Structure probing data (DMS and 2A3) for a 207-nucleotide construct.
The DMS profile rests on 4,431 reads.
The 2A3 profile rests on 1,379 reads.
It was measured as part of the RMDB library M2RFPK.
2A3 adducts were read by reverse transcription with SuperScript II with manganese.
RNA sequence: GGGAACGACUCGAGUAGAGUCGAAAAUUGAUAAUUUGUUGUGUAACUUCAUUUAAAUGAAUUGAAACAAAUUUAGUACAAGUGGAUGUAGGAUAACCGUCCGUCCUUUACAUUGGUAUAAAAGUGAACGACACAGACCUCUUCGGAGGUCUGUGAACAGAUUGUUAUACUUCGGUAUAACAAUCUGAAAAGAAACAACAACAACAAC
Reactivity to DMS in 0.01 (KOAc 150mM, MgCl2 10mM, bicine 150mM(pH8.5), 24C), signal-to-noise 2, nucleotides 027 to 156: u000u000g000a100u000a030a050u000u000u000g030u000u000g000u000g020u010a080a100c100u000u020c000a050u000u000u000a070a130a130u000g000a010a040u000u000g000a270a100a100c030a040a030a010u010u000u000a100g010u000a020c060a040a070g010u000g000g010a130u000g030u000a040g000g010a050u000a080a230c080c100g000u000c030c050g010u000c000c000u010u000u020a070c000a050u000u010g010g010u010a070u000a050a050a050a080g020u000g020a040a090c040g000a220c000a010c000a020g030a030c010c000u010c000u000u000c300g020g000a030g020g010u000c000u000g010u000g000a010a170
Reactivity to 2A3 in 0.01 (KOAc 150mM, MgCl2 10mM, bicine 150mM(pH8.5), 24C), signal-to-noise 3, nucleotides 027 to 156: u110u060g010a020u070a220a060u070u010u060g010u010u000g040u020g060u060a050a070c070u070u010c000a040u050u150u220a200a220a120u080g020a050a040u100u040g050a090a030a000c050a050a090a010u050u100u120a050g040u060a040c060a110a040g030u020g070g010a040u060g040u090a060g000g030a040u010a100a120c020c080g010u000c000c010g040u030c020c000u040u090u000a030c030a070u020u120g090g000u060a060u030a140a090a070a050g090u070g080a080a040c030g050a000c010a010c000a000g000a000c010c010u000c000u060u090c220g110g000a000g000g020u000c000u000g000u000g000a000a000